[RMDB]
RNA sequence: GGGAACGACUCGAGUAGAGUCGAAAAGUCCAGGCCAUGACAAGCUGGCACCCAGCUCUGCUUCACAUGAUCAAACUGCAUCACGGAAGCUGCACACGAUGACACCCUGUCUGGAAAGUUUUUGCCAGAGGGCAAAAGACUGCAAGCAGAAUAUCCAUCCUACCAUCAUAUUCGUAUGAUGGUAGGAAAAAGAAACAACAACAACAAC
Reactivity to DMS in 0.01 (KOAc 150mM, MgCl2 10mM, bicine 150mM(pH8.5), 24C), signal-to-noise 2, nucleotides 027 to 156: g010u000c030c020a060g030g000c020c030a110u010g020a150c110a000a070g030c020u000g000g030c010a080c020c030c020a240g010c040u000c030u000g000c000u000u000c020a120c050a020u000g030a050u000c020a140a090a170c110u000g010c070a070u000c020a080c040g000g000a070a080g010c030u000g000c080a120c020a110c040g000a100u010g030a120c050a040c010c010c010u000g000u000c000u000g030g020a040a080a050g000u000u000u010u010u000g040c030c030a200g030a160g030g010g000c010a000a010a080a050g000a050c050u000g020c050a060a070g040c040a060g030a110a080u000a100u000c020c010a290
Reactivity to 2A3 in 0.01 (KOAc 150mM, MgCl2 10mM, bicine 150mM(pH8.5), 24C), signal-to-noise 2, nucleotides 027 to 156: g020u010c010c010a010g040g200c000c020a120u130g040a100c050a030a030g000c020u030g030g000c040a110c000c050c000a020g000c030u090c030u090g050c040u040u030c030a140c040a290u050g030a050u060c030a040a140a090c090u120g010c050a010u020c020a010c040g050g000a030a010g030c000u020g010c040a020c010a030c060g110a080u060g030a010c000a020c070c010c010u040g050u070c010u000g000g050a080a040a020g060u050u060u020u090u100g000c020c010a070g010a030g140g100g000c040a060a030a030a010g050a010c030u060g000c040a030a050g000c020a010g030a000a040u140a040u190c000c020a010